[RMDB]
The record gives the reactivity of an RNA of 177 nucleotides to 2A3 and DMS.
RNA sequence: GGGAACGACUCGAGUAGAGUCGAAAAGCAUUGGGAAAGUUAAUCAAAAGUGCAUCAAAACUUUCCCUAAACGAAAUCAAAAUCGUUAUGAUGGACUUUUGACAUCGAUUAAGAUGAAUAGACACAACAAAAUACACGGUUUCGACCGUGUAUUUUGAAAAGAAACAACAACAACAAC
Reactivity to 2A3 in 0.01 (KOAc 150mM, MgCl2 10mM, bicine 150mM(pH8.5), 24C), signal-to-noise 3, nucleotides 027 to 126: g000c050a070u130u220g030g010g090a020a080a110g050u090u140a130a070u060c040a020a010a060a030g050u030g080c020a010u020c020a010a050a060a180c000u000u030u020c000c000c000u010a010a000a000c000g050a060a020a030u200c060a090a090a010a130u010c010g020u030u030a080u130g010a000u020g020g040a010c000u060u030u020u000g030a030c010a020u000c010g140a180u190u160a140a040g010a030u030g000a040a000u100a110g060a010c020a000c010a210a040
Reactivity to DMS in 0.01 (KOAc 150mM, MgCl2 10mM, bicine 150mM(pH8.5), 24C), signal-to-noise 4, nucleotides 027 to 126: g020c170a110u010u000g010g000g000a080a050a120g010u000u010a090a110u000c030a040a020a030a030g000u000g000c040a020u000c040a050a090a070a110c080u000u000u000c000c000c000u010a030a040a030c020g000a010a060a060u010c290a080a110a140a060u000c010g020u010u010a190u010g000a020u000g000g000a040c000u000u000u000u000g020a090c010a010u000c010g000a130u000u000a090a130g000a020u000g010a040a110u010a080g000a140c070a030c120a060a090

For 2A3, 2,723 sequencing reads were counted. The reactions ran in a buffer of 150 mM KOAc, 10 mM MgCl2 and 150 mM bicine (pH 8.5), at 24 C.